[RMDB]
RNA sequence: GGGAACGACUCGAGUAGAGUCGAAAAUUGUGGACAGGAGGUGGCUGGACGACACCAUUUACUACAUGGGCUUCGUCCCGUGGGGCAGAGACAUGAGGUUCGUGGUAGAGUACGACCUGGACGGCACGUAGUUAACGUUGUUCGCAACGUUAACUACAAAAGAAACAACAACAACAAC
Reactivity to DMS in 0.01 (KOAc 150mM, MgCl2 10mM, bicine 150mM(pH8.5), 24C), signal-to-noise 8, nucleotides 027 to 126: u010u000g020u010g010g010a090c090a090g010g010a100g010g020u010g020g020c070u000g010g010a040c040g010a120c300a090c010c010a040u000u010u010a070c120u000a150c130a040u000g000g000g010c100u000u000c140g020u010c000c010c090g030u000g010g010g000g010c060a030g000a070g010a070c080a060u000g000a270g010g000u000u000c090g020u000g010g010u000a060g000a140g010u010a050c060g000a090c030c020u000g010g010a070c090g000g000c120a080c200
Reactivity to 2A3 in 0.01 (KOAc 150mM, MgCl2 10mM, bicine 150mM(pH8.5), 24C), signal-to-noise 5, nucleotides 027 to 126: u030u040g040u050g020g020a030c030a070g030g030a040g040g040u060g030g030c050u050g040g020a010c020g020a010c020a020c030c010a010u070u110u080a110c070u020a020c010a050u030g000g050g040c040u060u060c050g030u040c000c000c010g050u100g020g000g000g000c020a010g000a010g020a070c030a070u110g050a050g060g000u040u080c030g010u040g010g020u060a030g010a010g080u050a030c020g010a030c000c010u020g040g020a020c010g020g030c040a020c100
This 177-nucleotide RNA was probed chemically with DMS and 2A3.
The RNA was probed in 150 mM KOAc, 10 mM MgCl2 and 150 mM bicine (pH 8.5) at 24 C.
For DMS the reverse transcriptase was MarathonRT.
Values cover nucleotides 27 to 126.